[RMDB]
RNA sequence: GGGAACGACUCGAGUAGAGUCGAAAAUCGAUGGCGUUCGCGCCAUCGAAGAGCCGUACCGCGUAGCACGCGGAUAGCAGUGAAGAUAUCCAAGGCCAUGGAGGAGGCGUGCUUUCGAGCACGCCAAGCUUCGAAACCGAUUCGUCGGUUUCGAAGCAAAAGAAACAACAACAACAAC
Reactivity to DMS in 0.01 (KOAc 150mM, MgCl2 10mM, bicine 150mM(pH8.5), 24C), signal-to-noise 1, nucleotides 027 to 126: u000c000g010a000u000g010g000c000g030u000u030c200g070c000g000c000c040a030u000c020g010a010a060g010a090g010c000c030g000u000a120c010c030g000c030g030u000a120g000c140a300c020g010c030g010g030a050u000a070g010c010a200g010u000g210a140a030g010a220u000a040u000c010c000a070a070g010g000c050c090a140u000g000g010a040g000g020a200g010g010c010g000u000g050c000u000u000u000c110g000a000g000c060a000c020g010c000c000a010a030

This 177-nucleotide RNA was probed chemically with DMS.
Values cover nucleotides 27 to 126.
The DMS profile rests on 618 reads.
Conditions: 150 mM KOAc, 10 mM MgCl2 and 150 mM bicine (pH 8.5), 24 C.
The data come from the RNA Mapping Database (RMDB), library M2PK50.